[RMDB]
Conditions: 150 mM KOAc, 10 mM MgCl2 and 150 mM bicine (pH 8.5), 24 C. Chemical mapping of a 177-nucleotide RNA with DMS and 2A3. The 2A3 profile rests on 8,905 reads. For DMS, 3,322 sequencing reads were counted. DMS adducts were read by reverse transcription with MarathonRT. As a SHAPE reagent, 2A3 marks flexible, mostly unpaired nucleotides at the ribose 2'-OH.
RNA sequence: GGGAACGACUCGAGUAGAGUCGAAAAAGAGCCGACGAACCUUCCAACCUUCCAACCUUCCAACCUUCCAACCUUCCAACCUUCCAAUCUAGUCGAGAGGAGGAGGAGGAGGAGGAGGAGGACAUAACUAACUGAAUUAAUUCGUUAAUUCAGUUAGAAAAGAAACAACAACAACAAC
Reactivity to DMS in 0.01 (KOAc 150mM, MgCl2 10mM, bicine 150mM(pH8.5), 24C), signal-to-noise 5, nucleotides 027 to 126: a050g020a100g030c010c020g010a100c060g010a080a080c040c020u000u000c030c040a100a170c050c020u010u000c030c040a080a100c060c020u000u000c020c050a110a100c070c010u000u000c030c030a120a100c040c010u000u000c000c040a080a090c070c010u010u010c020c020a050a170u010c030u020a100g010u010c140g010a060g000a280g010g000a130g000g010a160g000g000a110g000g000a170g000g000a100g000g010a160g010g000a100g010g010a300c210a040u010a050a120
Reactivity to 2A3 in 0.01 (KOAc 150mM, MgCl2 10mM, bicine 150mM(pH8.5), 24C), signal-to-noise 5, nucleotides 027 to 126: a000g080a020g040c030c010g020a040c030g010a050a050c000c000u010u010c010c030a080a080c020c010u050u000c010c010a060a070c020c010u050u000c010c030a120a120c030c010u040u010c010c030a120a110c020c030u060u000c000c030a090a090c050c000u110u020c020c010a030a060u020c020u080a040g140u140c050g040a020g010a030g120g030a030g040g010a040g010g030a030g010g010a050g000g010a030g000g020a040g000g040a010g000g010a020c020a090u210a090a040